[RMDB]
RNA sequence: GGGAACGACUCGAGUAGAGUCGAAAACCCUCCGUUCGCGGAGGGAACGCACCUUUGUGUAAGCAGGUGUACGAGAAUCCGGAAUCCCAUUGGGAUUCCGAUUCGAUGAGUACAUAUUGGCUUACACUCUGGUAGAUCGAGCCUUUUCGAAGGCUAACCCCCAUCUGGAAUUCGUUCCAGAUGGGGGAAAAGAAACAACAACAACAAC
Reactivity to 2A3 in 0.01 (KOAc 150mM, MgCl2 10mM, bicine 150mM(pH8.5), 24C), signal-to-noise 1, nucleotides 027 to 156: c000c030c000u000c010c000g000u010u070c280g000c050g160g030a010g000g000g000a040a000c130g040c000a000c000c010u020u010u010g010u000g010u000a000a000g000c030a060g090g030u040g000u000a020c000g030a020g030a190a000u060c250c090g000g000a000a000u020c000c000c060a300u200u300g000g000g020a020u000u010c000c000g000a000u010u010c000g010a180u180g110a060g010u000a000c000a000u060a290u160u280g180g000c000u000u020a000c000a000c000u000c000u000g000g000u060a080g000a080u210c130g040a010g000c000c000u050u080u190u100c300g120a040a000g010g000c000u000a080a100

Record summary:
Chemical mapping of a 207-nucleotide RNA with 2A3. It was measured as part of the RMDB library RNAMAK. 2A3 adducts were read by reverse transcription with SuperScript II with manganese. The RNA was probed in 150 mM KOAc, 10 mM MgCl2 and 150 mM bicine (pH 8.5) at 24 C.